The data come from the RNA Mapping Database (RMDB), library M2PK50.
An RNA of 177 nucleotides, treated with 2A3 and DMS and read out base by base.
The reactions ran in a buffer of 150 mM KOAc, 10 mM MgCl2 and 150 mM bicine (pH 8.5), at 24 C.
[RMDB]
RNA sequence: GGGAACGACUCGAGUAGAGUCGAAAAGUUUCUAAGUUCGCUUAGAAACAAAUCCUGCGCGGAAACGAACGUGCCUGACCCUAUUCGUUAAAGAUUUUCAAAAAACGUUCCUCUUCGGAGGAACGAAGUCCUUUAACAAGUUCGCUUGUUAAAGGACAAAAGAAACAACAACAACAAC
Reactivity to 2A3 in 0.01 (KOAc 150mM, MgCl2 10mM, bicine 150mM(pH8.5), 24C), signal-to-noise 4, nucleotides 027 to 126: g000u000u000u010c010u010a000a040g000u020u070c120g030c110u000u000a000g000a000a010a000c000a000a070a000u020c010c000u020g010c010g020c000g000g070a150a020a010c020g010a040a000c010g000u020g000c020c060u160g110a180c040c000c030u080a120u050u030c020g010u030u070a100a090a020g090a160u110u090u100u170c090a060a070a010a020a040a060c010g000u000u000c000c010u020c000u030u040c200g100g000a000g020g000a000a000c000g000a010a000
Reactivity to DMS in 0.01 (KOAc 150mM, MgCl2 10mM, bicine 150mM(pH8.5), 24C), signal-to-noise 2, nucleotides 027 to 126: g010u000u000u000c000u000a010a010g000u000u010c220g040c000u000u000a000g000a000a000a020c000a040a070a080u000c020c000u000g030c050g010c000g010g000a080a020a030c050g000a040a050c020g020u000g000c000c140u030g000a150c080c080c110u030a100u000u000c010g010u000u010a120a100a200g000a180u010u010u000u020c070a020a040a050a050a080a120c030g000u000u000c000c000u000c000u010u010c130g010g000a010g000g000a010a000c000g010a030a040